[RMDB]
RNA sequence: GGGAACGACUCGAGUAGAGUCGAAAACUGCUGGCGAUGUCGAGAGCCCAUGAGGGCGCUGUACUCUUCCCCGAAGGGUUAUGCGUAGGCUCUUUCGGAGUGGAACGAUGACCGGCGUCACGUAAGACCGGCUAUCUAGGUUCGCCUGGAUAGCCGGAAAAGAAACAACAACAACAAC
Reactivity to DMS in 0.01 (KOAc 150mM, MgCl2 10mM, bicine 150mM(pH8.5), 24C), signal-to-noise 3, nucleotides 027 to 126: c020u000g000c030u000g000g010c070g000a070u000g030u000c030g000a080g010a130g000c000c010c030a120u010g010a070g040g000g000c010g000c000u000g000u010a110c200u010c020u000u000c000c010c000c040g020a060a030g000g020g010u010u000a030u010g020c090g030u030a070g010g030c010u000c010u020u010u010c040g010g010a160g000u010g000g000a050a040c120g010a040u000g010a120c250c020g000g000c030g010u000c020a020c030g000u000a060a070g010a170
Reactivity to 2A3 in 0.01 (KOAc 150mM, MgCl2 10mM, bicine 150mM(pH8.5), 24C), signal-to-noise 2, nucleotides 027 to 126: c010u030g000c010u010g060g010c020g000a030u040g040u020c010g020a010g000a000g070c010c000c010a090u140g040a180g000g000g000c000g000c000u010g000u050a040c000u000c000u000u020c000c000c010c000g010a000a010g050g000g000u040u060a060u120g030c050g040u060a020g000g060c000u000c000u060u070u040c010g020g020a050g010u200g000g020a020a000c060g010a030u020g010a010c030c000g030g010c010g010u000c020a010c030g030u020a040a000g030a050